[RMDB]
RNA sequence: GGGAACGACUCGAGUAGAGUCGAAAAGAUGGGAACGACUCGAGUAGAGUCGAAAUUAAGAAUCGGAAGCAUGAGAACCGAGACAAACAUGCAAUCGCGAACUAGAGGAGAAACUCCUCUAGAAAUAAGCUAAUUUACGUUUCGACGUAAAUUAGCUAAAAGAAACAACAACAACAAC
Reactivity to 2A3 in 0.01 (KOAc 150mM, MgCl2 10mM, bicine 150mM(pH8.5), 24C), signal-to-noise 3, nucleotides 027 to 126: g040a070u300g000g000g060a010a060c000g000a000c020u000c000g010a010g090u120a010g030a000g000u030c000g000a010a010a010u120u090a140a060g100a080a110u040c010g000g000a050a000g000c030a000u080g000a020g020a030a000c000c000g000a020g010a090c180a010a000a000c020a000u000g040c090a000a020u300c160g000c020g030a010a020c000u000a000g000a000g060g020a030g030a130a090a020c250u000c000c000u000c000u000a000g020a000a020a010u250a010
Reactivity to DMS in 0.01 (KOAc 150mM, MgCl2 10mM, bicine 150mM(pH8.5), 24C), signal-to-noise 2, nucleotides 027 to 126: g000a060u010g000g040g000a060a090c010g010a010c000u000c000g000a110g000u040a080g030a000g000u000c000g000a010a020a070u010u000a130a120g000a040a030u000c020g000g010a300a160g050c000a020u010g040a300g000a080a060c000c010g000a000g080a160c210a070a000a000c040a000u000g000c000a300a120u020c150g020c130g020a010a180c000u000a000g000a030g060g010a000g070a240a070a270c090u000c000c000u000c000u000a000g020a000a080a070u050a060